[RMDB]
RNA sequence: GGGAACGACUCGAGUAGAGUCGAAAACGGAGGAUCUAGUCACCCAGAUGGCCCUUUUCCUACAAACGGUGGAGGACGCCCGUGAAUUAGACGUUAAGGCUGUGGAGUGGUUACAACAAAGUCGGUCUAUCAUAGACUCCCAUCCAUUGACCACAAAUAAUUCGUUCUGAUUCGUCAGAACGAAUUAAAAAGAAACAACAACAACAAC
Reactivity to 2A3 in 0.01 (KOAc 150mM, MgCl2 10mM, bicine 150mM(pH8.5), 24C), signal-to-noise 4, nucleotides 027 to 156: c030g020g010a030g040g020a070u000c020u070a030g020u040c010a020c020c020c030a030g040a200u090g030g000c020c000c010u040u010u000u050c040c010u050a170c090a060a130a010c110g020g000u030g010g010a010g000g040a020c080g030c010c000c020g000u000g000a030a040u070u010a070g040a040c020g020u030u060a100a040g010g020c040u030g010u040g040g010a080g010u070g000g020u050u080a050c040a150a010c030a060a190a030g030u040c040g050g000u000c020u030a140u120c030a050u040a090g010a030c000u000c010c000c000a010u020c020c000a020u020u080g090a120c000c030a040c050a080a070a020
Reactivity to DMS in 0.01 (KOAc 150mM, MgCl2 10mM, bicine 150mM(pH8.5), 24C), signal-to-noise 3, nucleotides 027 to 156: c050g010g040a120g030g000a060u000c050u000a110g030u000c030a130c060c020c060a120g010a100u000g010g000c030c010c020u000u000u000u000c020c010u030a300c080a060a070a120c110g000g050u010g010g010a120g020g030a080c050g040c060c020c040g000u000g010a110a080u000u010a100g010a070c030g000u000u000a080a090g030g000c020u000g060u000g000g000a100g020u000g020g010u000u000a050c070a050a100c040a070a030a050g010u000c060g020g040u000c020u010a050u010c080a140u000a080g010a040c020u000c000c010c010a170u000c010c020a110u000u000g020a040c010c010a030c050a080a080a130
Background:
The record gives the reactivity of an RNA of 207 nucleotides to 2A3 and DMS. It was measured as part of the RMDB library OK3TST. Reactivities are given for positions 27 through 156. The RNA was probed in 150 mM KOAc, 10 mM MgCl2 and 150 mM bicine (pH 8.5) at 24 C. For DMS, 5,105 sequencing reads were counted.